[RMDB]
RNA sequence: GGGAACGACUCGAGUAGAGUCGAAAAUGGACGUUGUUCGCAACGUCCACAUACUGAGACGUACGUUAAACGUAUCCCGGGCAAAAGUGCAGUUAGAAUAAGUACCUAUUGAGUUCGCUCAAUAGAAAUAUGAUUCAACUUUCGAGUUGAAUCAUAUAAAAGAAACAACAACAACAAC
Reactivity to DMS in 0.01 (KOAc 150mM, MgCl2 10mM, bicine 150mM(pH8.5), 24C), signal-to-noise 9, nucleotides 027 to 126: u000g000g000a010c000g020u000u000g000u000u020c220g020c000a010a000c000g010u000c000c000a010c120a050u010a080c090u000g010a190g010a060c070g010u010a040c110g020u000u000a040a070a150c100g010u000a070u000c010c010c010g000g000g020c100a040a060a080a090g020u000g000c030a060g010u000u000a070g000a110a080u010a070a090g000u000a070c140c000u000a010u000u000g010a010g020u000u010c180g010c000u000c000a010a010u000a010g000a040a090
Reactivity to 2A3 in 0.01 (KOAc 150mM, MgCl2 10mM, bicine 150mM(pH8.5), 24C), signal-to-noise 6, nucleotides 027 to 126: u050g000g000a000c000g000u000u000g010u040u050c160g010c100a010a000c000g000u000c000c000a000c000a010u030a000c010u070g050a020g020a050c040g030u040a000c020g050u080u200a110a260a030c010g000u030a060u040c020c000c000g010g050g010c080a130a120a030a040g070u090g020c030a030g040u090u150a050g100a150a080u160a220a020g040u050a070c000c000u000a000u010u000g010a010g020u000u110c230g010c040u000c000a000a000u010a010g020a060a040